An RNA of 177 nucleotides, treated with 2A3 and DMS and read out base by base. DMS adducts were read by reverse transcription with MarathonRT. Reactivities are given for positions 27 through 126.
[RMDB]
RNA sequence: GGGAACGACUCGAGUAGAGUCGAAAAGCCCGAUGGUUCGCCAUCGGGCAAAAGACUGAGAUCGCAAGAGUCAAAAGGAGAACAAAACUCCAAAUGCGAUCAAAACCCCAAAGUUCGCUUUGGGGAACAUUCUAUGGUGGUUCGCCACCAUAGAAUGAAAAGAAACAACAACAACAAC
Reactivity to 2A3 in 0.01 (KOAc 150mM, MgCl2 10mM, bicine 150mM(pH8.5), 24C), signal-to-noise 2, nucleotides 027 to 126: g050c000c000c000g030a010u010g000g090u030u090c250g070c080c000a000u000c010g010g030g000c000a060a000a010a000g000a010c030u020g050a000g000a190u000c000g020c010a040a060g040a020g210u040c010a020a000a000a100g020g020a040g000a140a030c060a130a270a060a000c020u000c000c000a060a040a020u010g010c000g020a000u000c010a040a040a050a100c000c010c000c000a000a020a000g010u030u090c170g040c090u000u000u000g000g000g000g000a000a000
Reactivity to DMS in 0.01 (KOAc 150mM, MgCl2 10mM, bicine 150mM(pH8.5), 24C), signal-to-noise 1, nucleotides 027 to 126: g010c000c000c000g000a000u000g010g070u010u030c270g030c000c010a020u010c000g000g020g000c000a000a000a040a040g010a020c050u000g000a230g000a000u000c010g040c030a040a150g000a080g020u000c100a100a110a120a100g000g000a000g000a040a150c200a110a050a130a220c000u020c000c000a000a090a110u000g030c000g000a010u000c020a050a020a050a150c010c030c000c000a000a020a030g020u000u010c260g020c010u000u000u000g000g010g000g000a020a070
The RNA was probed in 150 mM KOAc, 10 mM MgCl2 and 150 mM bicine (pH 8.5) at 24 C. The 2A3 profile rests on 2,068 reads.